RNA sequence: GGGAACGACUCGAGUAGAGUCGAAAAGAUAUGGAAUCAAGAACCGACGAAGUUUAGACUAUUCGGAAACGAACGAAUCUAAACAGAGGUUUAUGAUUCCUAAGUCAAACCCGUCUUCGGACGGGAACCAACUUAAUUGCUUCGGCAAUUAAGUUGGAAAAGAAACAACAACAACAAC
Reactivity to 2A3 in 0.01 (KOAc 150mM, MgCl2 10mM, bicine 150mM(pH8.5), 24C), signal-to-noise 2, nucleotides 027 to 126: g010a010u060a020u180g000g010a000a020u020c020a150a250g040a060a020c010c010g200a200c070g070a300a020g000u000u000u000a000g000a020c080u040a110u130u050c000g000g060a070a080a080c010g000a040a000c020g090a180a300u000c000u000a000a000a010c010a000g050a030g020g000u000u040u020a030u080g000a010u010u000c000c000u000a080a000g020u030c050a020a010a240c010c000c000g000u000c010u050u100c300g120g010a010c010g010g020g010a010a010
Reactivity to DMS in 0.01 (KOAc 150mM, MgCl2 10mM, bicine 150mM(pH8.5), 24C), signal-to-noise 2, nucleotides 027 to 126: g000a030u010a300u000g000g000a050a000u010c000a020a300g070a010a030c000c010g010a090c300g000a090a120g000u010u000u000a000g000a020c060u000a300u010u010c050g000g000a070a030a120c010g000a030a070c150g000a040a020u000c020u000a010a000a000c000a020g000a080g020g020u000u030u000a100u010g000a000u000u000c000c000u020a010a100g010u000c000a030a070a060c000c000c000g000u000c000u000u030c120g020g010a020c000g010g020g000a020a010
An RNA of 177 nucleotides, treated with 2A3 and DMS and read out base by base. For DMS the reverse transcriptase was MarathonRT. The DMS profile rests on 833 reads. The reactions ran in a buffer of 150 mM KOAc, 10 mM MgCl2 and 150 mM bicine (pH 8.5), at 24 C. For 2A3 the reverse transcriptase was SuperScript II with manganese. Source: RMDB library TTRDEL, as collected in RNAgym.